[RMDB]
RNA sequence: GGGAACGACUCGAGUAGAGUCGAAAAGAUAUGGAAUCGUUGUGGACAUGCUCUUACAUUCGGAAACGAAUGGGGAGCAACAGCCACACGAUUCCUAAGUCAAAACGAAAUGGUUCGCCAUUUCGAAGGUACUUAUCUUGUUCGCAAGAUAAGUACCAAAAGAAACAACAACAACAAC
Reactivity to DMS in 0.01 (KOAc 150mM, MgCl2 10mM, bicine 150mM(pH8.5), 24C), signal-to-noise 5, nucleotides 027 to 126: g000a030u000a250u000g000g000a010a000u000c000g000u010u010g030u000g000g000a050c160a210u010g020c000u000c000u000u000a130c000a010u000u010c000g020g010a050a030a110c000g020a000a010u000g010g000g000g000a010g010c010a030a020c230a170g010c000c000a000c000a010c000g000a010u000u000c000c000u000a000a070g010u000c010a090a100a130a190c020g000a010a010a010u000g010g020u000u010c260g010c000c000a020u000u000u000c000g010a080a060
Reactivity to 2A3 in 0.01 (KOAc 150mM, MgCl2 10mM, bicine 150mM(pH8.5), 24C), signal-to-noise 7, nucleotides 027 to 126: g010a010u030a020u080g000g010a010a000u010c030g050u170u300g000u020g020g020a080c140a300u300g010c000u010c010u030u100a160c010a010u020u000c000g030g000a030a040a020c000g000a000a010u010g010g000g020g000a000g010c000a010a000c050a000g010c000c000a000c010a010c000g000a000u000u000c000c000u010a010a000g000u000c010a020a000a080a140c020g020a000a020a000u030g020g090u060u100c300g030c100c010a000u010u010u010c010g050a070a020
Annotation:
Chemical mapping of a 177-nucleotide RNA with DMS and 2A3. Source: RMDB library TTRDES, as collected in RNAgym.